[RMDB]
RNA sequence: GGGAACGACUCGAGUAGAGUCGAAAAAUCUUCUGGUUUCCUUUCCCAUCUUAUCUGAACCCUGGUCUGGGUGGUCAUAAAAGGAGGAAAAGUAACUUUAAACUGACCUCACAGGGCUUUGUAGCAUGCUAUUUUCUGAAUUCGUUCAGAAAAUAGCAAAAGAAACAACAACAACAAC
Reactivity to 2A3 in 0.01 (KOAc 150mM, MgCl2 10mM, bicine 150mM(pH8.5), 24C), signal-to-noise 5, nucleotides 027 to 126: a000u070c070u160u030c050u090g070g000u020u030u030c010c000u020u010u010c020c000c010a040u030c050u120u140a110u040c040u070g070a050a060c000c000c010u050g050g060u100c050u040g100g000g010u030g000g010u000c010a010u080a080a090a050a020g080g060a040g050g090a060a120a070a060g080u080a050a090c010u020u030u080a140a110a050c040u020g010a010c000c000u010c010a050c010a010g000g010g060c010u050u040u040g080u050a040g050c050a030u020
Reactivity to DMS in 0.01 (KOAc 150mM, MgCl2 10mM, bicine 150mM(pH8.5), 24C), signal-to-noise 3, nucleotides 027 to 126: a060u000c040u020u010c130u020g010g000u000u010u000c010c020u010u010u000c020c010c000a110u010c090u010u020a050u000c060u010g020a070a070c020c000c010u000g010g010u020c080u010g010g000g010u000g010g000u020c020a030u000a070a040a030a060g000g010a030g000g000a060a070a060a110g000u030a060a110c090u020u010u020a040a050a120c190u000g000a160c000c000u000c030a030c030a050g000g000g010c060u000u000u000g010u040a070g010c140a080u020
This 177-nucleotide RNA was probed chemically with 2A3 and DMS. For 2A3 the reverse transcriptase was SuperScript II with manganese. It was measured as part of the RMDB libraries RFM100 and RFMREP. The RNA was probed in 150 mM KOAc, 10 mM MgCl2 and 150 mM bicine (pH 8.5) at 24 C.